[RMDB]
RNA sequence: GGGAACGACUCGAGUAGAGUCGAAAAAUCCGCGAUAUCCCUUUCGUGGUGCUGGUUGGCGGCUCGUCGCUGGACUUCGAAAUCCCACAAUUGGUCACCGACGCCCUUUCUCACUACAAGCUGGUGGCAUCUUGCACUAGUUCGCUAGUGCAAGAUGAAAAGAAACAACAACAACAAC
Reactivity to 2A3 in 0.01 (KOAc 150mM, MgCl2 10mM, bicine 150mM(pH8.5), 24C), signal-to-noise 3, nucleotides 027 to 126: a000u040c020c000g030c020g000a030u040a150u190c000c000c000u020u060u020c050g020u020g020g050u040g050c050u030g020g060u090u120g060g000c030g040g010c040u030c050g070u020c020g000c050u050g020g030a050c010u060u000c100g020a080a070a070u000c010c010c000a040c020a040a120u070u130g040g000u050c030a010c070c040g130a100c030g030c000c000c030u020u080u060c020u030c030a040c040u130a050c040a140a010g030c060u050g040g010u000g030g000
Reactivity to DMS in 0.01 (KOAc 150mM, MgCl2 10mM, bicine 150mM(pH8.5), 24C), signal-to-noise 3, nucleotides 027 to 126: a080u010c010c010g000c030g010a090u000a100u000c010c020c020u000u010u000c050g040u000g000g010u010g030c050u000g000g010u000u000g000g000c050g010g020c070u000c060g000u010c060g020c070u000g020g010a040c060u000u010c100g000a080a080a140u010c020c000c000a070c190a080a110u010u010g010g000u000c010a040c050c010g020a100c110g000c030c020c040u000u010u010c030u000c050a050c110u010a050c110a080a110g000c100u000g020g030u000g010g010